[RMDB]
RNA sequence: GGGAACGACUCGAGUAGAGUCGAAAAAAAAUGGCUGUGAGGAACUACUGUCUUCACGCAGAAAGCGUCUAGCCAUGGCGUUAGUAUGAGUGUCGUGCAGCCUCCAGCGUCGAAAAACCGUCAGAAACGUUCCUGCUGUGUUCGCACAGCAGGAACGAAAAGAAACAACAACAACAAC
Reactivity to DMS in 0.01 (KOAc 150mM, MgCl2 10mM, bicine 150mM(pH8.5), 24C), signal-to-noise 1, nucleotides 027 to 126: a030a010a050a040u000g030g010c010u000g000u000g030a030g030g000a020a030c090u030a300c000u000g010u000c040u010u000c000a000c030g000c000a030g000a080a120a300g000c000g000u000c030u000a080g090c210c300a070u020g020g000c010g000u000u000a130g030u010a030u000g000a000g000u000g000u030c000g060u020g000c010a000g020c000c000u000c000c000a040g000c000g000u000c030g030a010a090a070a030a140c070c000g000u060c060a140g000a060a070a080
An RNA of 177 nucleotides, treated with DMS and read out base by base. For DMS the reverse transcriptase was MarathonRT. For DMS, 602 sequencing reads were counted. Conditions: 150 mM KOAc, 10 mM MgCl2 and 150 mM bicine (pH 8.5), 24 C. Values cover nucleotides 27 to 126.